Annotation: This 177-nucleotide RNA was probed chemically with DMS and 2A3. For DMS, 11,269 sequencing reads were counted. The reactions ran in a buffer of 150 mM KOAc, 10 mM MgCl2 and 150 mM bicine (pH 8.5), at 24 C. Values cover nucleotides 27 to 126. The data come from the RNA Mapping Database (RMDB), library M2PK50.
[RMDB]
RNA sequence: GGGAACGACUCGAGUAGAGUCGAAAAGGUCUGAUCUUCGGAUCAGACCAACUCUGAUUCCCAAUAGCUGCGUAUCUUGGCUAAGAGGGAUAGGCGUUGCCACUCAGGGGGGUUUCGACCCCCCUAAGACAUCAGGAUUAUUCGUAAUCCUGAUGUCAAAAGAAACAACAACAACAAC
Reactivity to DMS in 0.01 (KOAc 150mM, MgCl2 10mM, bicine 150mM(pH8.5), 24C), signal-to-noise 8, nucleotides 027 to 126: g010g010u000c000u000g000a000u000c000u000u010c220g020g010a010u000c010a000g000a000c010c000a010a020c060u000c020u000g000a200u000u000c000c000c000a110a200u000a020g010c010u010g010c300g020u010a080u010c150u000u010g010g010c010u000a020a060g010a300g000g000g000a020u000a080g000g000c020g010u000u000g010c010c010a130c260u000c130a020g020g000g000g000g010g010u000u000u010c140g000a050c000c010c000c000c000c000u000a010a050
Reactivity to 2A3 in 0.01 (KOAc 150mM, MgCl2 10mM, bicine 150mM(pH8.5), 24C), signal-to-noise 3, nucleotides 027 to 126: g010g000u010c000u000g010a010u020c020u040u090c240g050g000a000u010c000a000g000a000c000c000a000a000c010u000c000u000g040a070u150u030c000c000c000a000a040u040a000g010c010u050g020c050g130u170a120u240c120u130u240g030g000c010u010a040a020g070a090g130g000g000a000u030a040g010g010c010g040u040u030g160c000c000a040c030u080c040a010g000g030g010g000g020g010u020u040u030c010g030a020c000c000c010c000c000c000u010a010a000